The record gives the reactivity of an RNA of 177 nucleotides to DMS and 2A3.
RNA sequence: GGGAACGACUCGAGUAGAGUCGAAAAAGAUAGCUUUGAUAUAAGGCACUUGGGCUAAGGUAUGCCCCAAUUGAAGUAAAUCUUUCGGAUUUGCCUUGCCAAAAGACACGCGACUAGAUAAGCGUUCAUCAUACCUCGGAUUCGUCCGAGGUAUGAUAAAAGAAACAACAACAACAAC
Reactivity to DMS in 0.01 (KOAc 150mM, MgCl2 10mM, bicine 150mM(pH8.5), 24C), signal-to-noise 5, nucleotides 027 to 126: a100g000a090u010a130g010c000u010u000u000g000a150u040a050u020a140a110g000g000c000a070c050u010u000g000g010g020c070u050a040a030g020g010u000a020u020g010c120c010c000c070a040a040u000u020g010a040a100g000u000a070a080a120u000c010u000u000u000c120g000g010a070u010u010u000g000c010c000u010u010g000c010c020a060a040a060a070g000a170c120a060c060g010c020g010a130c120u020a090g000a110u020a040a080g010c020g010u010u010c070
Reactivity to 2A3 in 0.01 (KOAc 150mM, MgCl2 10mM, bicine 150mM(pH8.5), 24C), signal-to-noise 8, nucleotides 027 to 126: a000g120a080u150a050g010c010u050u030u090g100a050u080a010u070a190a070g030g000c020a020c060u060u070g090g030g010c110u140a070a010g070g070u110a080u140g080c000c010c000c010a040a080u060u130g060a030a020g040u200a070a080a140u030c000u030u090u120c100g100g020a090u040u010u060g010c000c000u010u030g000c000c000a040a090a000a070g060a030c060a020c070g050c010g100a060c090u130a110g040a260u070a120a040g000c010g010u060u070c020
About this RNA
DMS adducts were read by reverse transcription with MarathonRT. Conditions: 150 mM KOAc, 10 mM MgCl2 and 150 mM bicine (pH 8.5), 24 C. Reactivities are given for positions 27 through 126.